[RMDB]
RNA sequence: GGGAACGACUCGAGUAGAGUCGAAAAGGACUCCGUGAGGAGUCCGUGCAGCGAGAGCUGCACAAGGGCUAAGUGUGUGUCGGUGCCCCUCCUCUACGAUGUUGAGUAGAGGAGAGUAGUCGUCUCACGAUUUAUAGUGAGACUGACAUGACACAAGAUGUAUCUACUCAUUCGUGAGUAGAUACAUAAAAGAAACAACAACAACAAC
Reactivity to DMS in 0.01 (KOAc 150mM, MgCl2 10mM, bicine 150mM(pH8.5), 24C), signal-to-noise 3, nucleotides 027 to 156: g050g000a010c000u000c000c010g010u010g000a150g030g010a030g030u000c000c010g020u000g000c000a010g000c000g010a190g010a210g020c000u000g000c000a010c000a040a050g010g010g020c030u000a090a210g020u010g020u000g010u000g020u000c010g020g000u000g000c030c000c010c010u010c000c000u000c010u000a010c000g020a160u000g030u000u000g020a300g010u000a000g010a020g010g000a000g010a030g020u000a040g020u000c010g010u000c000u000c010a020c000g000a270u010u000u000a200u000a170g010u010g000a030g000a010c010u020g030a000c010a080u000g010a020c020a020c020a080a190g000
Reactivity to 2A3 in 0.01 (KOAc 150mM, MgCl2 10mM, bicine 150mM(pH8.5), 24C), signal-to-noise 4, nucleotides 027 to 156: g010g010a000c000u010c000c010g030u030g030a040g010g000a000g000u000c000c000g000u000g010c000a000g000c000g030a050g000a010g050c000u010g020c000a010c010a010a030g010g000g010c030u080a080a130g050u080g020u000g000u000g010u060c010g010g090u100g000c000c000c000c000u000c000c000u000c000u000a000c000g100a100u140g030u140u090g040a030g010u000a000g000a000g000g000a000g000a000g000u010a010g010u000c000g000u000c000u010c000a010c000g050a050u030u300u160a210u140a060g000u000g000a000g000a000c000u010g000a000c000a010u050g000a000c000a000c000a010a010g090

Structure probing data (DMS and 2A3) for a 207-nucleotide construct. Reactivities are given for positions 27 through 156. Conditions: 150 mM KOAc, 10 mM MgCl2 and 150 mM bicine (pH 8.5), 24 C. The DMS profile rests on 10,100 reads.